[RMDB]
RNA sequence: GGGAACGACUCGAGUAGAGUCGAAAAACGCAUCAUGCGACACUUAGGGUGUCACCGGAGAGAAUUUCCCGAGUUCGUUCUCCCCUGUCGACCCCUUCACUCUGGCAUCGGAGCCCUACCCGGCCCGGCUCUGGGCGCCUUGGCCCGGCCUCGUGCGACAAUGUGUAAUGUUCGCAUUACACAUUGUAAAAGAAACAACAACAACAAC
Reactivity to 2A3 in 0.01 (KOAc 150mM, MgCl2 10mM, bicine 150mM(pH8.5), 24C), signal-to-noise 3, nucleotides 027 to 156: a000c050g040c060a070u080c040a030u210g030c040g060a040c030a010c120u100u170a070g060g030g000u160g020u030c030a010c030c060g030g010a010g000a000g020a050a050u090u090u100c030c030c020g020a090g050u100u140c020g000u020u000c010u010c000c000c000c010u020g020u040c080g010a040c000c000c010c020u030u140c030a050c010u090c030u050g040g000c030a080u090c080g030g010a010g010c020c020c040u080a090c020c020c000g040g000c030c020c010g040g000c020u060c090u080g030g010g000c040g030c030c090u040u090g080g020c020c010c010g000g020c000c000u040c050g050u060g020c030g010
Reactivity to DMS in 0.01 (KOAc 150mM, MgCl2 10mM, bicine 150mM(pH8.5), 24C), signal-to-noise 1, nucleotides 027 to 156: a060c070g030c040a130u000c080a130u000g000c020g000a070c050a040c040u000u010a060g020g010g020u000g010u000c020a070c020c090g010g010a080g010a110g010a080a110u000u000u000c040c030c000g020a120g010u000u010c050g000u000u000c000u000c010c000c030c000u000g000u000c020g020a300c000c020c000c030u010u010c030a070c060u020c040u000g020g010c050a060u000c060g010g010a140g020c010c010c040u010a100c040c040c020g040g020c030c040c040g000g010c040u000c020u000g020g020g030c020g040c010c040u010u000g000g000c030c000c020g020g010c010c020u010c000g010u000g000c050g000